[RMDB]
RNA sequence: GGGAACGACUCGAGUAGAGUCGAAAACAGGCUGUGCCGAGCCUGGACAGGGCUUGAGGAGAUUCCCGCACUCCUGCUGUGGCCUGAACAUAUGAGCUGCCAUCCUUUGUCGUAGAGGACAGCCUAACUCACUAAGUCCAUGUGCUCAUCCAGAGAGCAACGCACCCUUGUUCGCAAGGGUGCGUUGAAAAGAAACAACAACAACAAC
Reactivity to 2A3 in 0.01 (KOAc 150mM, MgCl2 10mM, bicine 150mM(pH8.5), 24C), signal-to-noise 1, nucleotides 027 to 156: c020a050g040g000c050u060g000u230g280c040c080g040a000g040c000c000u000g010g010a080c050a120g060g000g000c010u070u060g060a030g010g000a030g010a060u000u110c000c000c010g080c000a050c000u000c000c010u000g030c050u080g030u040g030g030c000c080u010g080a100a000c010a040u180a040u130g010a010g040c020u060g020c080c000a060u090c070c050u150u060u080g130u210c230g080u080a000g000a000g070g000a040c000a000g060c000c010u030a100a030c010u130c110a000c130u140a030a030g000u030c030c040a060u110g000u080g060c030u030c000a030u050c030c000a030g060a000g000a000g110
An RNA of 207 nucleotides, treated with 2A3 and read out base by base. Conditions: 150 mM KOAc, 10 mM MgCl2 and 150 mM bicine (pH 8.5), 24 C. Reactivities are given for positions 27 through 156. It was measured as part of the RMDB library OK3TST.